Record summary: The data come from the RNA Mapping Database (RMDB), library VIROID. Structure probing data (DMS) for a 177-nucleotide construct.

RNA sequence: GGGAACGACUCGAGUAGAGUCGAAAAGGAUGUGCAAGCUUAUGUGAUGACGGAGGUGAACCGGUCGGCGCAGACUGCCCCAGCUUCUGAUUUCGGGACCCGGGAGGAGGAGAUGGCGAUGGUCCCGGGUAAUAUGGUCCUUCGGGACCAUAUUACCAAAAGAAACAACAACAACAAC
Reactivity to DMS in 0.01 (KOAc 150mM, MgCl2 10mM, bicine 150mM(pH8.5), 24C), signal-to-noise 1, nucleotides 027 to 126: g020g030a100u010g040u000g020c040a110a040g010c050u020u000a080u000g010u000g010a070u010g000a100c080g000g020a110g020g020u000g020a100a060c060c020g000g020u000c090g020g020c060g030c050a050g000a030c050u010g000c050c010c010c090a070g010c040u000u000c040u000g000a140u000u000u000c040g040g010g000a060c040c040c100g000g010g030a030g010g000a090g000g000a080g000a110u000g000g010c070g000a070u010g020g010u000c000c000c010g040